[RMDB]
RNA sequence: GGGAACGACUCGAGUAGAGUCGAAAACUGAUAGCGCCUGAUCAGCGCGUACAUGGCCACGAGACACGUACUAGCAGUGAGGCCGUACAGGAUCGCGACUCUGCUGCGCGGCCGGUACGAUAGCGCGGAACUAUGUGCGCUUCGGCGCACAUAGUUCAAAAGAAACAACAACAACAAC
Reactivity to DMS in 0.01 (KOAc 150mM, MgCl2 10mM, bicine 150mM(pH8.5), 24C), signal-to-noise 1, nucleotides 027 to 126: c040u010g010a070u010a080g020c040g000c060c020u010g000a060u000c050a280g010c010g000c000g000u000a020c060a070u000g000g040c030c010a110c150g000a150g020a080c080a080c110g000u020a040c030u000a170g020c080a050g020u020g000a080g000g000c060c030g000u010a070c070a070g020g000a050u000c050g030c040g010a090c010u040c100u000g010c090u000g000c010g000c010g000g000c000c020g000g000u000a030c000g000a120u000a060g010c000g020c050g010
Reactivity to 2A3 in 0.01 (KOAc 150mM, MgCl2 10mM, bicine 150mM(pH8.5), 24C), signal-to-noise 2, nucleotides 027 to 126: c030u070g060a140u160a090g080c030g000c000c040u120g020a120u100c040a000g030c000g030c010g050u010a010c060a120u200g040g020c040c010a090c110g130a110g010a010c030a010c050g060u130a030c010u030a030g040c000a030g060u050g060a050g040g030c070c000g010u000a020c010a060g000g100a160u040c030g000c000g070a050c030u040c090u300g030c060u080g000c030g000c000g020g010c020c000g000g010u010a010c000g070a110u190a030g050c070g020c020g060